[RMDB]
RNA sequence: GGGAACGACUCGAGUAGAGUCGAAAACUGGCCCUGGCCGCGCAACGGGGACGCCGCAGCGAGGAAGAGCUGCUGGCGCUCAGCCCGGCAGACGGCCUGAUUACCGGGGUGGGCACGGUCAACGCGGUACGCUUCAUGUGUUCGCACAUGAAGCGUAAAAAGAAACAACAACAACAAC
Reactivity to 2A3 in 0.01 (KOAc 150mM, MgCl2 10mM, bicine 150mM(pH8.5), 24C), signal-to-noise 2, nucleotides 027 to 126: c020u030g120g010c010c000c000u020g020g000c000c000g000c000g010c050a120a190c070g000g000g000g050a000c020g010c010c020g000c010a000g000c030g060a110g120g120a190a100g050a040g080c000u020g000c110u190g020g000c000g000c040u000c000a080g090c020c010c000g000g000c000a000g040a120c000g030g030c000c000u020g000a010u000u060a020c010c000g000g010g010g030u040g000g000g000c020a020c100g000g000u020c040a040a050c080g020c040g140g000
Reactivity to DMS in 0.01 (KOAc 150mM, MgCl2 10mM, bicine 150mM(pH8.5), 24C), signal-to-noise 2, nucleotides 027 to 126: c050u020g070g010c000c000c010u010g050g050c010c010g030c110g000c040a090a080c080g000g010g010g000a060c000g010c010c010g010c000a010g010c000g000a130g000g050a210a130g000a280g000c000u000g000c030u010g010g000c020g010c130u000c050a050g000c060c010c000g020g030c030a040g000a160c030g010g030c000c010u010g010a090u010u000a110c050c050g000g000g000g000u000g000g000g000c020a140c030g020g010u000c210a060a050c060g020c090g020g030
The record gives the reactivity of an RNA of 177 nucleotides to 2A3 and DMS. The reactions ran in a buffer of 150 mM KOAc, 10 mM MgCl2 and 150 mM bicine (pH 8.5), at 24 C.